The record gives the reactivity of an RNA of 207 nucleotides to 2A3.
For 2A3, 618 sequencing reads were counted.
The reactions ran in a buffer of 150 mM KOAc, 10 mM MgCl2 and 150 mM bicine (pH 8.5), at 24 C.
2A3 adducts were read by reverse transcription with SuperScript II with manganese.
RNA sequence: GGGAACGACUCGAGUAGAGUCGAAAAGUUCAUCCCCUGAUCAAAGAUGCCCGAAACGGUGAGGCGGAAAGCAAAUUAAAUAACGUCAACCCAUCGGGACGGUUGGCCAGUUAAGAAGUGAGGAUUCAAAAGAUCGAACCGUUCGCGGUUCGAUCAACGUUUACUGCAUCUUCGGAUGCAGUAAACGAAAAGAAACAACAACAACAAC
Reactivity to 2A3 in 0.01 (KOAc 150mM, MgCl2 10mM, bicine 150mM(pH8.5), 24C), signal-to-noise 2, nucleotides 027 to 156: g150u150u080c100a060u060c070c020c020c010u060g020a000u030c070a000a090a000g070a100u230g080c050c020c020g000a070a090a040c060g010g000u040g040a170g030g000c030g030g030a130a030a000g140c210a000a060a120u140u180a120a130a090u160a110a050c000g010u030c020a000a060c000c040c000a020u020c000g000g040g000a000c000g000g000u000u000g000g020c040c020a000g040u030u060a110a100g060a070a000g040u110g180a080g080g040a050u160u040c030a080a060a040a060g000a000u000c000g000a000a000c000c010g000u060u070c300g000c040g000g050u000u000c000g000a000u000c000a020a000